[RMDB]
RNA sequence: GGGAACGACUCGAGUAGAGUCGAAAAUGAUCCAGGACAUGCUGUUCAUGCAGCUGCGGCACAUGAUGGAGACGGAGGCCGUCAACGCCGGAGAGCGUGCGGCCGGCAAGCCGCUACCGGGAGCGCGUGAACGCAUCUGAUUCGUCAGAUGCGUUCAAAAAGAAACAACAACAACAAC
Reactivity to DMS in 0.01 (KOAc 150mM, MgCl2 10mM, bicine 150mM(pH8.5), 24C), signal-to-noise 2, nucleotides 027 to 126: u010g000a090u000c040c020a110g020g010a220c120a060u050g010c010u000g000u000u010c200a140u010g040c010a060g000c030u000g000c040g030g000c050a080c160a070u030g000a120u020g010g020a130g010a070c090g000g000a280g010g000c010c020g000u000c060a080a060c030g000c000c010g010g000a140g010a120g030c000g020u010g010c000g000g010c000c000g000g000c130a100a130g010c030c030g010c020u000a090c030c030g010g010g000a060g030c050g040c100g010
Reactivity to 2A3 in 0.01 (KOAc 150mM, MgCl2 10mM, bicine 150mM(pH8.5), 24C), signal-to-noise 2, nucleotides 027 to 126: u140g030a030u040c030c020a050g000g010a080c030a170u110g030c010u020g000u190u280c090a110u280g060c040a030g000c040u050g030c030g010g000c000a060c030a090u280g070a140u180g120g070a100g010a050c040g120g040a060g090g000c010c000g080u080c150a100a030c010g000c010c070g080g180a170g000a000g070c000g000u010g000c000g000g040c020c020g020g030c000a000a000g050c010c020g000c000u030a050c010c020g000g070g050a040g010c030g000c040g020